[RMDB]
RNA sequence: GGGAACGACUCGAGUAGAGUCGAAAAGGGGUCGAUGACCACGGAUGAAGAGCUUGGAUUUAUGGCUGAAGCCUCCACGGCCAUUGUCAGCUCUACAUCUAUCAAUCGACGGAGGCACCCAAAUCUAUCACUUGCACUUCGGUGCAAGUGAUAGAAACCUCCUGUGAUAGUUCGCUAUCACAGGAGGAAAAGAAACAACAACAACAAC
Reactivity to 2A3 in 0.01 (KOAc 150mM, MgCl2 10mM, bicine 150mM(pH8.5), 24C), signal-to-noise 3, nucleotides 027 to 156: g050g020g090g030u010c030g030a030u080g040a040c090c100a060c250g010g000a010u010g030a040a040g020a010g020c090u210u240g200g030a130u300u300u110a020u060g000g000c000u030g030a120a000g010c000c000u000c000c000a010c010g000g000c000c010a020u010u020g040u040c180a010g000c010u000c000u020a040c010a000u000c010u020a110u190c060a100a090u010c010g020a010c030g010g000a000g030g020c000a020c010c000c000a060a070a000u010c000u000a020u000c000a000c010u000u000g010c010a010c010u070u060c300g040g020u000g000c020a000a000g000u000g010a000u010a000g000a000a000a000